Source: RMDB library OK3TST, as collected in RNAgym.
The record gives the reactivity of an RNA of 207 nucleotides to 2A3 and DMS.
For DMS, 3,081 sequencing reads were counted.
Conditions: 150 mM KOAc, 10 mM MgCl2 and 150 mM bicine (pH 8.5), 24 C.
The 2A3 profile rests on 1,898 reads.
For 2A3 the reverse transcriptase was SuperScript II with manganese.
RNA sequence: GGGAACGACUCGAGUAGAGUCGAAAAGAAUGGUCCCUGGGGUGCUAAGAGGAUCCAGUAGCCCCUGGUCCUCAUUCAUGGGCUCAGGACUUGGGUGUCCAGGGCACAGUGGCCUCCCUGUGGGAAGCUCAGAGGCUGGGGAGCAGGAUGCUGAUACAUCCAUAACGGAAUUCGUUCCGUUAUGGAUAAAAGAAACAACAACAACAAC
Reactivity to 2A3 in 0.01 (KOAc 150mM, MgCl2 10mM, bicine 150mM(pH8.5), 24C), signal-to-noise 3, nucleotides 027 to 156: g050a040a090u090g040g020u030c010c020c000u010g000g020g000g010u070g020c030u090a110a050g030a010g040g040a050u080c030c030a040g050u110a040g070c000c020c020c000u010g030g030u070c010c020u020c010a040u090u100c040a040u030g040g010g040c030u020c060a020g070g000a030c020u110u150g140g050g060u170g160u020c000c030a030g010g010g030c040a000c010a040g080u110g060g020c020c000u080c000c000c010u080g050u190g030g010g020a050a010g020c010u020c070a030g010a030g050g040c020u000g000g000g000g000a060g000c020a010g000g030a030u060g040c030u050g020a060u070a130c090
Reactivity to DMS in 0.01 (KOAc 150mM, MgCl2 10mM, bicine 150mM(pH8.5), 24C), signal-to-noise 1, nucleotides 027 to 156: g010a070a090u000g030g010u000c010c000c010u000g030g000g040g020u010g020c060u000a040a130g000a100g000g010a020u000c020c020a130g000u010a160g020c040c020c000c010u030g000g020u000c020c000u000c020a150u010u010c050a110u010g020g000g070c000u010c030a110g060g000a040c010u000u000g050g040g000u010g030u000c000c000a120g000g020g030c020a020c010a060g020u000g020g020c020c020u000c000c000c010u000g040u010g060g050g000a070a050g040c000u010c070a160g000a040g020g040c000u010g020g020g010g000a140g030c040a060g050g000a090u000g010c010u000g030a230u000a130c160